[RMDB]
The record gives the reactivity of an RNA of 177 nucleotides to 2A3 and DMS.

RNA sequence: GGGAACGACUCGAGUAGAGUCGAAAAAAGACCAGGACUGGACCAACAUUUUCACGGCUAAGACUUCAUCCAGUCGGGUGAAGAUUACGUACGAUAAGACAUUCACUAUCAACUCUUCCUUUGAAGGACGUACAGGACUAUUCGUAGUCCUGUACGUAAAAGAAACAACAACAACAAC
Reactivity to 2A3 in 0.01 (KOAc 150mM, MgCl2 10mM, bicine 150mM(pH8.5), 24C), signal-to-noise 3, nucleotides 027 to 126: a020a000g070a020c030c000a040g020g050a050c050u050g040g000a020c010c030a040a110c040a100u060u060u080u160c070a050c040g020g000c030u040a060a020g040a290c000u000u010c010a010u000c000c010a160g170u140c150g020g000g010u020g020a000a030g000a020u010u070a030c070g040u040a070c040g060a110u050a060a040g040a010c020a060u090u060c020a060c070u070a100u180c020a030a060c020u010c020u120u040c010c030u100u050u160g070a100a030g040g030
Reactivity to DMS in 0.01 (KOAc 150mM, MgCl2 10mM, bicine 150mM(pH8.5), 24C), signal-to-noise 4, nucleotides 027 to 126: a070a080g020a130c040c010a100g020g000a050c030u000g020g020a100c040c040a090a110c130a100u000u000u000u000c070a070c080g010g000c090u010a050a050g000a160c010u000u010c020a040u010c020c000a180g000u020c190g000g020g020u000g010a010a030g000a190u000u010a050c160g010u000a080c090g000a090u000a040a050g010a070c070a110u000u000c060a040c070u000a050u010c050a060a080c110u010c050u000u000c030c110u000u000u000g010a080a050g000g010
DMS adducts were read by reverse transcription with MarathonRT.
The DMS profile rests on 3,203 reads.
The data come from the RNA Mapping Database (RMDB), library OK2TST.
Values cover nucleotides 27 to 126.